[RMDB]
RNA sequence: GGGAACGACUCGAGUAGAGUCGAAAAAAACAGGUAUAAACUACCUUGAUACCGGAAUAAAACGAUCGGGAAAGCGGUGCCAUAAUCCGUACCGCCUUACCAACCUCAGUCAAAAGUAUAAGUUUUCGAGCAAAUCCCUAUUCGUAGGGAUUUGCUCAAAAGAAACAACAACAACAAC
Reactivity to 2A3 in 0.01 (KOAc 150mM, MgCl2 10mM, bicine 150mM(pH8.5), 24C), signal-to-noise 1, nucleotides 027 to 126: a010a010a010c060a000g000g020u000a040u000a000a210a050c000u090a000c020c020u000u130g000a000u030a090c010c000g040g150a180a040u100a050a010a000a020c080g090a180u190c060g000g000g040a000a000a000g000c000g050g040u000g000c010c000a050u190a260a070u110c000c000g000u000a000c000c000g000c000c000u040u300a000c010c000a020a020c000c000u040c060a000g030u150c130a040a040a040a040g020u030a190u160a260a050g000u020u120u020u120c000

Chemical mapping of a 177-nucleotide RNA with 2A3. High 2A3 reactivity points to a flexible backbone, as in loops and unpaired stretches. The reactions ran in a buffer of 150 mM KOAc, 10 mM MgCl2 and 150 mM bicine (pH 8.5), at 24 C.